[RMDB]
RNA sequence: GGGAACGACUCGAGUAGAGUCGAAAAAUCUUGUUUAUGUCAUUUAUAAGCUGUUUGCCGGGUUCCAGGGUGCUUACUCUGGAGCGCCCAAGCCCAUUCUCAAGAAGCCCGUGUUAAGAACAGCCACCGUCCCUAUAAUGUUCGCAUUAUAGGGACGAAAAGAAACAACAACAACAAC
Reactivity to DMS in 0.01 (KOAc 150mM, MgCl2 10mM, bicine 150mM(pH8.5), 24C), signal-to-noise 2, nucleotides 027 to 126: a100u020c070u020u010g000u000u020u010a090u060g010u010c040a130u020u000u040a120u020a120a080g010c000u010g000u000u000u000g010c010c060g000g000g010u010u000c050c080a050g010g020g010u000g020c110u000u020a030c070u020c140u020g000g000a000g030c080g020c010c010c020a070a120g020c020c090c020a040u020u020c030u010c080a100a060g000a050a100g000c000c030c030g000u000g000u040u040a050a070g010a060a000c010a010g000c010c140a060c130
Reactivity to 2A3 in 0.01 (KOAc 150mM, MgCl2 10mM, bicine 150mM(pH8.5), 24C), signal-to-noise 4, nucleotides 027 to 126: a000u060c050u060u050g040u050u120u020a100u080g090u050c150a150u030u160u150a250u100a100a030g000c010u000g010u020u010u050g030c030c040g000g040g000u100u030c050c030a050g020g020g000u030g060c040u130u120a120c030u020c080u150g060g020a010g000c020g010c000c010c000a020a020g000c000c040c000a050u180u030c070u010c050a060a120g040a060a050g060c020c000c020g100u120g070u130u100a160a040g040a040a000c010a020g000c020c010a020c090